[RMDB]
RNA sequence: GGGAACGACUCGAGUAGAGUCGAAAAGAUAUGGAUCCCGAUAGGGAGCUCAGUGUCGGAAACGACAUGGGAGCGACGAUCUAUGGGAUCCUAAGUCAAAAGAACCAAUAGUUCGCUAUUGGUUCAACGAAGUCUAGAAGUUCGCUUCUAGACUUCGAAAAGAAACAACAACAACAAC
Reactivity to 2A3 in 0.01 (KOAc 150mM, MgCl2 10mM, bicine 150mM(pH8.5), 24C), signal-to-noise 2, nucleotides 027 to 126: g000a010u000a000u070g000g010a000u000c040c000c030g000a190u300a100g000g010g000a000g020c020u000c040a050g010u000g000u020c000g000g000a010a000a000c020g030a020c020a010u150g260g250g050a000g010c010g060a080c020g000a000u010c000u050a120u220g010g000g000a010u020c000c000u000a000a000g010u010c020a020a020a010a300g020a010a000c000c000a000a000u000a010g030u040u110c300g000c300u010a000u010u010g000g000u000u000c010a010a000
Reactivity to DMS in 0.01 (KOAc 150mM, MgCl2 10mM, bicine 150mM(pH8.5), 24C), signal-to-noise 2, nucleotides 027 to 126: g000a020u010a050u010g010g010a000u000c000c010c000g000a100u000a010g000g020g010a000g010c000u010c000a300g010u000g000u000c010g030g000a010a000a040c010g020a010c000a000u000g010g070g010a010g020c010g040a080c300g010a020u010c000u000a040u040g000g030g020a000u000c000c000u010a000a060g010u000c010a090a050a170a150g000a030a010c000c000a020a030u000a000g030u000u010c240g020c000u000a010u000u000g010g020u000u000c000a030a140